About this RNA
Conditions: 150 mM KOAc, 10 mM MgCl2 and 150 mM bicine (pH 8.5), 24 C. An RNA of 177 nucleotides, treated with DMS and 2A3 and read out base by base. The data come from the RNA Mapping Database (RMDB), library OK2TRN. The 2A3 profile rests on 3,000 reads. For DMS the reverse transcriptase was MarathonRT. For DMS, 4,406 sequencing reads were counted.
RNA sequence: GGGAACGACUCGAGUAGAGUCGAAAAAUCGGAGUGCUUUCCAUGUGAGGAAGCAUCACGGCGCAUGGCAGCCAGCCGGGGUGCUGCAGGGACACCGGAGGGCUCCAGCACUUGGAGGAAACCUGGGCAGCAUGUACGAAUUCGUUCGUACAUGCUGAAAAGAAACAACAACAACAAC
Reactivity to DMS in 0.01 (KOAc 150mM, MgCl2 10mM, bicine 150mM(pH8.5), 24C), signal-to-noise 4, nucleotides 027 to 126: a090u010c040g010g010a100g030u000g010c020u010u000u000c010c010a210u010g010u000g000a110g000g000a040a070g010c030a020u010c090a160c100g000g010c040g020c040a100u010g010g010c300a040g010c010c030a100g010c010c010g000g010g010g020u000g000c030u000g000c230a080g010g000g010a040c040a050c010c010g000g010a040g020g000g000c010u010c070c040a040g000c040a020c050u000u000g000g000a080g000g000a040a090a110c020c010u000g010g000g000
Reactivity to 2A3 in 0.01 (KOAc 150mM, MgCl2 10mM, bicine 150mM(pH8.5), 24C), signal-to-noise 1, nucleotides 027 to 126: a000u080c030g080g020a040g030u030g000c000u050u070u000c010c010a100u210g110u110g110a300g020g040a040a010g040c040a010u100c010a000c040g030g040c040g000c060a110u080g070g000c040a010g030c030c010a010g000c000c000g000g020g000g000u070g040c050u060g050c050a100g000g040g030a020c020a020c040c000g000g030a020g020g020g000c030u060c050c000a010g010c000a020c010u030u060g050g010a020g000g060a100a020a020c000c020u010g000g000g000